An RNA of 177 nucleotides, treated with 2A3 and DMS and read out base by base.
[RMDB]
RNA sequence: GGGAACGACUCGAGUAGAGUCGAAAAGCUUUCCGCUGUCUCUCGGUUGGAUGGGACGCAUCCCAUGUGGUUGCUGACUAAUCGGCAAGAAAAAGUGCAGUCGAGUCCAAGUGAUGGGGAAGUAUCAAUUUACAAACGUUUUCGAACGUUUGUAAAUAAAAGAAACAACAACAACAAC
Reactivity to 2A3 in 0.01 (KOAc 150mM, MgCl2 10mM, bicine 150mM(pH8.5), 24C), signal-to-noise 5, nucleotides 027 to 126: g010c020u050u040u010c020c030g060c120u050g070u020c010u000c000u020c080g130g030u030u040g020g000a030u030g030g130g020a000c030g000c010a050u050c010c020c010a090u210g080u140g060g070u020u020g000c010u020g020a060c040u100a180a150u120c020g020g000c020a020a020g100a100a110a010a010a010g070u060g000c070a030g020u010c020g020a010g010u000c010c010a070a060g150u020g060a070u080g000g020g000g010a000a020g010u030a050u190c060a060
Reactivity to DMS in 0.01 (KOAc 150mM, MgCl2 10mM, bicine 150mM(pH8.5), 24C), signal-to-noise 9, nucleotides 027 to 126: g020c120u000u000u000c020c030g010c070u000g010u000c030u000c030u000c060g020g010u000u000g010g010a030u000g000g010g010a090c100g020c030a040u000c020c010c020a160u010g020u010g020g010u000u000g010c000u000g010a170c290u010a130a090u000c010g010g010c020a050a060g010a060a050a080a090a100g010u000g010c020a090g020u000c020g010a300g000u000c010c010a040a060g010u000g010a060u010g010g000g010g000a030a040g010u000a080u010c150a080
The RNA was probed in 150 mM KOAc, 10 mM MgCl2 and 150 mM bicine (pH 8.5) at 24 C. For DMS, 16,151 sequencing reads were counted.